The record gives the reactivity of an RNA of 177 nucleotides to 2A3 and DMS.
The reactions ran in a buffer of 150 mM KOAc, 10 mM MgCl2 and 150 mM bicine (pH 8.5), at 24 C.
DMS adducts were read by reverse transcription with MarathonRT.
For DMS, 6,185 sequencing reads were counted.
RNA sequence: GGGAACGACUCGAGUAGAGUCGAAAACCUAGGUCGUUCGCGACCUAGGAAAUAAAAUCAGCGGUAAAAAUCGAGGCGUUAUUACCGCUGAACGCCUCGAUUAAAGUUCUAUGUUCGCAUAGAACAAGAACUGUCAUAUUUUCGAAUAUGACAGUUCAAAAGAAACAACAACAACAAC
Reactivity to 2A3 in 0.01 (KOAc 150mM, MgCl2 10mM, bicine 150mM(pH8.5), 24C), signal-to-noise 4, nucleotides 027 to 126: c000c010u010a000g000g010u000c010g010u020u070c210g010c000g130a000c000c000u000a000g000g000a010a030a010u100a000a050a000a050u090c040a020g040c030g100g030u080a100a120a070a030a010u020c020g000a010g010g000c010g010u000u010a070u110u100a060c010c030g000c020u000g010a000a000c000g000c000c000u000c000g000a010u010u060a050a050a010g000u010u000c000u010a010u010g020u020u040c200g000c060a000u000a010g000a000a000c000a010a030
Reactivity to DMS in 0.01 (KOAc 150mM, MgCl2 10mM, bicine 150mM(pH8.5), 24C), signal-to-noise 4, nucleotides 027 to 126: c000c000u010a010g000g030u000c000g020u000u020c210g030c020g010a000c000c000u000a010g000g000a010a050a030u000a030a050a080a100u010c050a040g020c030g000g000u010a040a070a070a050a020u000c010g000a030g010g010c010g010u000u010a060u000u010a100c040c050g010c050u000g010a010a010c020g000c000c000u000c010g000a020u000u000a030a050a130g000u000u000c000u000a010u000g000u000u020c180g010c020a020u000a000g000a000a000c000a090a090